[RMDB]
RNA sequence: GGGAACGACUCGAGUAGAGUCGAAAAUCAAAUACUCAAACUUCACUUCAGAAGAGAAGACGCACGCAGCGAGCGUGAGAGAGACUCACUCACCCAACCCAGGGAAGGGACCACCAGGAGGAAAAAACGAAUGUACAAGGUUCGCCUUGUACAUUCGAAAAGAAACAACAACAACAAC
Reactivity to DMS in 0.01 (KOAc 150mM, MgCl2 10mM, bicine 150mM(pH8.5), 24C), signal-to-noise 2, nucleotides 027 to 126: u000c070a010a120a040u000a130c070u020c070a060a120a150c040u020u000c010a030c060u010u030c100a110g010a160a030g000a100g010a020a060g020a090c090g040c070a020c110g010c010a100g020c090g020a060g020c030g010u000g010a060g030a140g000a140g000a060c050u010c050a030c020u000c100a130c030c010c010a090a070c070c010c020a090g000g010g040a070a060g000g000g000a110c060c020a070c070c040a080g000g000a030g010g020a000a050a030a090a060a070
Reactivity to 2A3 in 0.01 (KOAc 150mM, MgCl2 10mM, bicine 150mM(pH8.5), 24C), signal-to-noise 1, nucleotides 027 to 126: u060c020a000a090a000u160a100c040u040c120a080a040a160c010u040u030c040a030c060u140u060c040a100g030a160a050g000a120g030a150a030g110a160c100g000c020a010c000g010c000a050g140c060g160a030g000c030g020u060g010a000g000a000g000a000g030a040c000u000c010a050c040u040c040a080c030c000c000a020a070c000c000c040a000g000g000g030a000a050g040g020g020a030c030c010a010c000c040a010g010g050a040g000g000a010a000a060a030a080a030
Source: RMDB library M2PK90, as collected in RNAgym. Chemical mapping of a 177-nucleotide RNA with DMS and 2A3. For 2A3 the reverse transcriptase was SuperScript II with manganese. For 2A3, 1,292 sequencing reads were counted. The RNA was probed in 150 mM KOAc, 10 mM MgCl2 and 150 mM bicine (pH 8.5) at 24 C.